[RMDB]
An RNA of 177 nucleotides, treated with 2A3 and DMS and read out base by base. For 2A3, 2,147 sequencing reads were counted.

RNA sequence: GGGAACGACUCGAGUAGAGUCGAAAAGGUGUCGGGGAGACCUCCCUCGAGGUCGGCGGCCACGAUGGGGCUGAUUGCCCCUGUGGUGUUGUGCUGGAGGAUCAGGAGGUCCUGGAUGGCCCUCAGCCAAACCUCUGUCAUUCGUGACAGAGGUUUGAAAAGAAACAACAACAACAAC
Reactivity to 2A3 in 0.01 (KOAc 150mM, MgCl2 10mM, bicine 150mM(pH8.5), 24C), signal-to-noise 2, nucleotides 027 to 126: g000g030u080g020u100c070g000g010g000g050a110g020a030c000c010u010c020c030c030u040c070g110a020g000g090u050c000g010g010c020g090g020c000c000a000c010g160a190u250g000g000g000g000c020u100g200a300u170u300g000c010c000c000c020u000g000u000g000g010u030g100u060u110g080u130g000c000u040g040g060a040g030g000a100u120c070a050g060g010a000g010g000u000c000c020u090g120g060a060u070g080g000c020c000c000u030c030a030g030c000
Reactivity to DMS in 0.01 (KOAc 150mM, MgCl2 10mM, bicine 150mM(pH8.5), 24C), signal-to-noise 3, nucleotides 027 to 126: g020g020u010g010u010c040g010g010g020g010a160g010a040c010c000u000c010c030c040u000c090g010a150g010g010u000c040g000g030c020g010g010c000c000a010c030g000a120u010g020g000g020g010c010u000g000a150u010u010g000c000c000c000c000u010g010u000g010g020u000g000u000u010g010u000g020c000u000g010g010a060g000g010a090u000c110a140g010g000a070g000g000u000c020c030u000g020g000a150u000g000g000c030c010c000u000c070a120g000c110